[RMDB]
RNA sequence: GGGAACGACUCGAGUAGAGUCGAAAAGAUAUGGAACAUGUAAGAACUUUUGACGUGCACACCUCGGAAACGAGGUGCCGCACGAUAAGUUUACAUGUUCCUAAGUCAAAACCGCUGUUCGCAGCGGGCGACAAAGAAUGUUCGCAUUCUUUGUCGCAAAAGAAACAACAACAACAAC
Reactivity to 2A3 in 0.01 (KOAc 150mM, MgCl2 10mM, bicine 150mM(pH8.5), 24C), signal-to-noise 2, nucleotides 027 to 126: g000a010u040a020u090g000g000a000a000c010a000u020g000u040a070a090g090a290a060c040u090u110u300u300g300a170c060g000u000g020c010a000c000a010c010c000u010c010g010g000a020a090a010c020g030a000g000g000u000g000c030c030g020c000a000c000g030a010u050a020a010g010u010u030u020a000c000a000u010g000u010u010c000c000u000a000a000g000u000c010a080a000a040a110c000c020g000c020u030g040u080u120c300g020c130a000g010c010g000g050
Reactivity to DMS in 0.01 (KOAc 150mM, MgCl2 10mM, bicine 150mM(pH8.5), 24C), signal-to-noise 2, nucleotides 027 to 126: g010a030u010a300u010g000g010a020a010c000a000u010g020u000a040a060g000a070a050c040u000u010u010u010g030a240c110g030u000g000c020a300c000a020c010c000u000c000g020g020a100a070a170c000g030a000g000g040u000g010c180c160g010c000a020c000g000a070u000a010a060g010u000u000u000a040c000a000u000g000u000u000c000c000u020a020a100g020u000c070a120a050a180a280c040c000g000c000u010g030u020u020c100g030c000a010g020c000g000g000
Conditions: 150 mM KOAc, 10 mM MgCl2 and 150 mM bicine (pH 8.5), 24 C. The record gives the reactivity of an RNA of 177 nucleotides to 2A3 and DMS. The 2A3 profile rests on 3,908 reads. As a SHAPE reagent, 2A3 marks flexible, mostly unpaired nucleotides at the ribose 2'-OH. Values cover nucleotides 27 to 126. High DMS reactivity at an A or C suggests that its Watson-Crick edge is free. It was measured as part of the RMDB library TTRDES. For DMS, 1,545 sequencing reads were counted.